[RMDB]
RNA sequence: GGGAACGACUCGAGUAGAGUCGAAAAGCAAACGCCCCAGAGCCCAAGGGCCUCCCGGGGCGCGUCUGCAGUAACAGGUGUGAGCAUCCUAGCAGCAGUUUGAUGAUCAUGUAUGAUACUGCACACAUUUCAACUCUCCUUUCGAGGAGAGUUGAAAAAAAGAAACAACAACAACAAC
Reactivity to DMS in 0.01 (KOAc 150mM, MgCl2 10mM, bicine 150mM(pH8.5), 24C), signal-to-noise 2, nucleotides 027 to 126: g010c220a050a050a200c030g000c020c000c030c000a100g030a080g000c000c010c120a180a190g020g030g000c070c030u000c110c030c000g000g000g010g000c000g030c150g000u010c130u000g020c020a060g020u000a020a070c050a000g000g090u060g020u040g000a010g020c010a020u030c000c160u000a090g000c140a160g010c200a050g000u000u040u010g000a020u000g010a020u000c010a000u000g000u020a070u040g000a120u000a000c000u000g000c000a020c180a110c030a140